[RMDB]
RNA sequence: GGGAACGACUCGAGUAGAGUCGAAAAGAUAUGGACUUUAAGAGCAUCGAUCUACAUGUCGGAAACGACAUAAGUAGGGAGCUUGAAGAGUCCUAAGUCAAAAGGAAGGGAGUUCGCUCCCUUCCAAGCAACUACACUUGUUCGCAAGUGUAGUUGCAAAAGAAACAACAACAACAAC
Reactivity to 2A3 in 0.01 (KOAc 150mM, MgCl2 10mM, bicine 150mM(pH8.5), 24C), signal-to-noise 2, nucleotides 027 to 126: g010a000u040a010u050g010g010a000c000u100u120u100a100a040g020a000g050c010a060u300c060g020a020u010c020u020a000c000a000u020g000u000c010g010g000a010a010a000c010g030a000c010a030u060a120a140g000u010a010g010g030g020a010g000c000u030u030g040a080a010g010a000g030u050c000c000u010a020a010g000u010c010a100a030a020a110g020g010a000a020g000g000g010a010g020u090u170c230g140c110u010c010c010c010u010u000c000c000a000a000
Reactivity to DMS in 0.01 (KOAc 150mM, MgCl2 10mM, bicine 150mM(pH8.5), 24C), signal-to-noise 2, nucleotides 027 to 126: g000a010u000a160u000g000g000a020c000u010u000u020a080a300g000a010g000c030a300u010c220g000a020u010c000u000a000c020a080u000g030u000c030g030g000a010a020a080c010g010a020c010a020u020a030a180g000u000a000g000g000g020a010g030c000u000u000g020a300a190g000a010g030u000c000c000u000a000a130g000u000c020a100a050a140a100g000g020a000a030g010g020g010a000g040u000u020c300g010c030u010c000c010c010u000u000c000c000a010a040